[RMDB]
RNA sequence: GGGAACGACUCGAGUAGAGUCGAAAACAUUACGAAUUCAGUCGCAAAUUGUAGAAUUAGCCACUCUACGAUUUAGUGAGCGUUAGUAACGUUGUAAUAUAAUAUAGUCUUUGGAAGGAUUAUAUUGGAGCCGCGGACAAGUUCGCUUGUCCGCGAACAGAUUCCAUCUGUUCGCAGAUGGAAUCUGAAAAGAAACAACAACAACAAC
Reactivity to 2A3 in 0.01 (KOAc 150mM, MgCl2 10mM, bicine 150mM(pH8.5), 24C), signal-to-noise 2, nucleotides 027 to 156: c020a030u100u180a030c020g080a100a110u110u160c060a060g120u040c000g000c010a000a020a020u010u030g010u000a010g000a000a010u010u040a030g010c010c000a030c010u010c000u000a000c000g010a010u000u000u110a070g000u020g010a050g060c060g020u020u090a050g020u050a070a030c040g010u010u040g020u040a140a110u080a110u060a130a010u010a010u000a010g010u010c010u090u090u130g160g030a140a070g030g000a020u010u010a010u000a010u010u010g050g020a080g080c060c000g010c010g020g000a010c000a000a010g010u060u150c160g040c190u000u010g000u010c010c020g030c000g010a000a000
Background:
Chemical mapping of a 207-nucleotide RNA with 2A3. Conditions: 150 mM KOAc, 10 mM MgCl2 and 150 mM bicine (pH 8.5), 24 C. High 2A3 reactivity points to a flexible backbone, as in loops and unpaired stretches. The data come from the RNA Mapping Database (RMDB), library M2RFPK.